[RMDB]
RNA sequence: GGGAACGACUCGAGUAGAGUCGAAAAGCCGUGGCCGAUUACCGGGGGCUGUCCGUGCAGCAGGUCAUCGACACCCAGGCAGGUCUCUACCGUGGCAAGGCUGGCAUCGCCGCGGGGCUAGCCGAUCGAUAUCGAGUACGUUCGCGUACUCGAUAUCAAAAGAAACAACAACAACAAC
Reactivity to DMS in 0.01 (KOAc 150mM, MgCl2 10mM, bicine 150mM(pH8.5), 24C), signal-to-noise 2, nucleotides 027 to 126: g030c010c010g030u000g000g020c010c040g000a070u000u010a040c040c020g000g010g050g010g020c050u000g000u000c110c210g000u010g000c030a050g030c040a090g020g000u000c060a010u000c050g010a140c140a120c040c010c010a120g030g000c050a170g000g020u010c100u000c080u010a090c040c040g000u010g030g030c060a120a130g000g010c010u010g020g000c050a020u010c070g000c020c020g010c020g000g010g010g000c010u000a040g020c020c010g020a100u000c100
Reactivity to 2A3 in 0.01 (KOAc 150mM, MgCl2 10mM, bicine 150mM(pH8.5), 24C), signal-to-noise 2, nucleotides 027 to 126: g010c000c020g030u040g040g010c020c020g000a030u040u050a030c050c000g000g040g060g170g030c020u030g060u070c140c150g080u220g030c020a030g020c010a030g000g060u030c000a010u020c010g040a020c000a070c080c010c020a000g100g000c020a020g060g000u020c040u000c040u150a090c030c010g110u040g090g000c050a120a080g010g000c000u000g040g000c000a030u040c030g000c010c000g000c030g000g010g010g000c010u060a010g010c010c000g000a050u070c040